[RMDB]
RNA sequence: GGGAACGACUCGAGUAGAGUCGAAAAGACGGUGCGGUGACGCACCGUCACAGCAAGCUUCGGCUUGCUGAGCCAUUAACGUGAGUUAAUGGCACAUAGGUACUUCGGUACCUAUGAGCGAGCGUACGCGCUCGCAAGACAACGGUGACGUUGUCAGUAGGACGUACGCGUCCUACACCGUUGUGCUACGGCACAACGGAAUUAGGUUAACUAUUUAGUUUUACUGUUCAGGAUGCCUAUUGGCAGCCCCAUAAUAUCCAGGACAUACAGAGCUAUUCGUAGCUCUGAAAAGAAACAACAACAACAAC
Reactivity to DMS in 0.01 (KOAc 150mM, MgCl2 10mM, bicine 150mM(pH8.5), 24C), signal-to-noise 3, nucleotides 027 to 266: g000a010c000g010g030u000g010c000g020g000u020g000a160c010g020c000a000c010c000g020u000c000a080c010a000g010c000a000a010g000c000u000u010c210g030g010c000u020u000g020c000u000g000a150g010c010c000a000u000u010a010a000c020g010u020g000a170g010u000u010a000a010u000g010g010c010a070c030a000u000a000g000g020u000a000c000u000u040c180g010g000u010a000c000c000u010a000u000g000a210g010c010g000a030g030c000g030u010a100c280g040c020g030c000u000c000g000c020a050a060g000a020c010a020a010c000g010g000u020g000a170c000g010u000u000g000u010c000a110g000u020a020g010g010a030c010g030u000a070c220g030c000g020u000c000c010u000a010c030a150c010c010g000u000u000g020u000g000c000u020a110c160g040g000c000a000c000a000a000c000g000g010a040a000u010u010a030g010g000u010u010a040a060c080u000a130u010u000u010a080g000u000u000u010u000a030c080u000g000u000u000c010a030g020g000a010u000g000c010c000u000a110u010u020g010g000c080a120g000c070c030c020c040a110u020a050a050u020a030u000c000c020a060g000g000a000c020a090u010a260
Reactivity to 2A3 in 0.01 (KOAc 150mM, MgCl2 10mM, bicine 150mM(pH8.5), 24C), signal-to-noise 9, nucleotides 027 to 266: g010a000c000g000g010u000g010c010g010g050u090g040a030c010g000c000a000c000c000g000u000c000a000c000a000g000c000a010a010g000c010u070u300c290g150g010c000u000u010g000c000u000g000a010g000c000c000a000u000u000a000a010c020g030u050g080a090g000u030u000a000a000u000g000g000c000a000c000a000u000a000g010g000u000a000c010u030u070c300g110g000u000a000c000c000u000a000u010g020a020g000c000g000a000g000c000g010u040a050c260g010c000g010c120u010c000g010c010a010a040g010a000c000a000a010c000g020g080u110g060a030c010g000u000u000g000u000c010a000g000u000a000g000g010a000c010g010u050a020c240g020c010g120u010c000c000u010a000c020a020c010c000g000u000u000g000u000g000c000u020a050c260g110g000c000a000c000a000a010c000g000g010a000a080u100u050a010g030g020u070u110a030a020c030u040a140u300u240u140a100g030u070u080u040u030a020c010u020g010u010u010c010a010g000g010a030u030g010c020c020u190a270u260u230g110g020c060a070g060c020c000c000c010a090u140a180a070u080a110u010c010c010a030g020g020a000c020a020u180a060